[RMDB]
RNA sequence: GGGAACGACUCGAGUAGAGUCGAAAAAGCUCCUGUUUCGACAGGAGCUGUGUGGCUGCGCUUUUGUGCUCGAUGUAGAGUGCUUUCCUGCCGGAAAGGGCUUGAGAGCUUGAUUCGUCAAGCUCAAACUUUAUAAGAUCUUCGGAUCUUAUAAAGUAAAAGAAACAACAACAACAAC
Reactivity to DMS in 0.01 (KOAc 150mM, MgCl2 10mM, bicine 150mM(pH8.5), 24C), signal-to-noise 9, nucleotides 027 to 126: a020g000c000u000c000c000u000g000u000u000u010c160g010a040c010a010g000g000a010g010c000u000g000u000g010u000g010g010c030u010g010c070g010c080u000u010u000u000g020u000g010c020u000c030g010a130u010g010u010a150g000a050g010u000g000c020u000u000u000c010c010u000g020c150c070g010g000a050a070a080g010g000g010c070u000u000g000a180g010a020g010c000u000u000g000a030u000u010c160g010u000c000a010a000g000c000u000c000a040a080
Reactivity to 2A3 in 0.01 (KOAc 150mM, MgCl2 10mM, bicine 150mM(pH8.5), 24C), signal-to-noise 5, nucleotides 027 to 126: a000g010c000u000c000c000u000g020u020u090u080c170g080a010c000a000g000g000a000g010c000u000g000u010g010u020g050g000c060u060g020c050g030c040u020u060u100u180g050u070g030c010u010c030g050a050u170g040u150a060g020a020g040u050g050c000u020u020u010c010c010u030g070c030c030g020g050a110a070a030g070g020g020c030u140u160g130a100g000a010g120c000u010u010g020a020u040u050c120g030u000c090a000a000g000c000u000c000a000a030

This 177-nucleotide RNA was probed chemically with DMS and 2A3.
For 2A3 the reverse transcriptase was SuperScript II with manganese.
The RNA was probed in 150 mM KOAc, 10 mM MgCl2 and 150 mM bicine (pH 8.5) at 24 C.
DMS adducts were read by reverse transcription with MarathonRT.